RNA sequence: GGGAACGACUCGAGUAGAGUCGAAAAUCAAAUAAUCUGAAUGAAAGAGUAUCUUUUUGCGAAGAUAUUAGUAAAUCUGUUAAUGGUUUACCAUCUAGACCUAAAACAGUUGAAUUAUAUAAUUGCUUUGCUUGUAUCCAAGACUCUAAAGAGACAGCGUACCGUUGGUAUUCGUACCAACGGUACGAAAAGAAACAACAACAACAAC
Reactivity to 2A3 in 0.01 (KOAc 150mM, MgCl2 10mM, bicine 150mM(pH8.5), 24C), signal-to-noise 1, nucleotides 027 to 156: u010c000a000a040a070u110a060a080u000c080u100g090a060a040u140g120a230a300a050g060a000g050u040a100u040c060u040u150u080u110u040g000c020g000a040a030g010a050u000a030u040u020a000g010u070a000a030a050u040c000u000g000u010u010a040a110u090g010g000u070u000u060a000c030c030a030u030c030u040a010g000a000c000c000u110a200a190a020a000c000a000g030u160u050g060a000a030u100u020a100u000a010u010a220a070u100u100g060c000u000u000u030g060c000u010u100g120u140a170u100c070c000a030a000g000a060c000u000c000u040a090a120a030g130a030g040a010c060a070g100